[RMDB]
This 207-nucleotide RNA was probed chemically with 2A3 and DMS. Values are in units of 0.01, from 0 to 300, in steps of 10. The DMS profile rests on 4,162 reads. For 2A3, 2,551 sequencing reads were counted. The RNA was probed in 150 mM KOAc, 10 mM MgCl2 and 150 mM bicine (pH 8.5) at 24 C. For 2A3 the reverse transcriptase was SuperScript II with manganese.
RNA sequence: GGGAACGACUCGAGUAGAGUCGAAAAACGCCGCAACCGGUGUGGAUGCCGUGCCGAUUCGUUUUGCAGGCUCUUACCAGCGCGACGAUACCGGCGAAACGGUGGCCGUCGAAGUGGUCAUGCGUGGACGUCAGAAAGAAAUCGACACCGGCGAGGGUAUCGAGCGUAUUUUCGAAUACGCUCGAUAAAAAGAAACAACAACAACAAC
Reactivity to 2A3 in 0.01 (KOAc 150mM, MgCl2 10mM, bicine 150mM(pH8.5), 24C), signal-to-noise 4, nucleotides 027 to 156: a000c050g030c010c000g010c030a030a020c000c000g010g020u000g000u030g130g000a010u050g090c060c040g090u120g000c010c000g010a020u030u020c020g040u010u030u150u190g030c070a110g100g070c020u000c020u110u130a090c050c030a020g010c000g000c000g020a000c000g000a000u030a050c000c000g000g000c040g040a110a030a020c010g000g010u000g010g010c000c010g070u180c100g090a180a050g090u140g060g020u040c010a030u260g150c020g000u040g060g060a030c030g030u100c050a020g130a030a130a000g110a040a100a000u030c010g030a010c010a000c000c000g030g000c020g010a030g010g010g000
Reactivity to DMS in 0.01 (KOAc 150mM, MgCl2 10mM, bicine 150mM(pH8.5), 24C), signal-to-noise 2, nucleotides 027 to 156: a090c040g040c010c040g010c060a170a050c040c010g010g030u000g060u020g020g020a050u000g030c000c010g050u000g010c000c010g010a050u000u000c000g010u000u000u000u000g000c020a150g040g030c030u030c180u000u080a080c060c020a080g030c020g050c100g010a020c010g040a050u000a020c010c000g040g030c010g010a110a110a070c000g010g050u000g010g010c010c020g020u000c060g030a090a170g000u000g040g010u000c060a040u000g000c000g000u000g000g020a140c040g000u020c040a190g010a100a140a140g000a050a110a050u000c020g000a040c000a020c000c010g000g020c010g020a130g000g010g000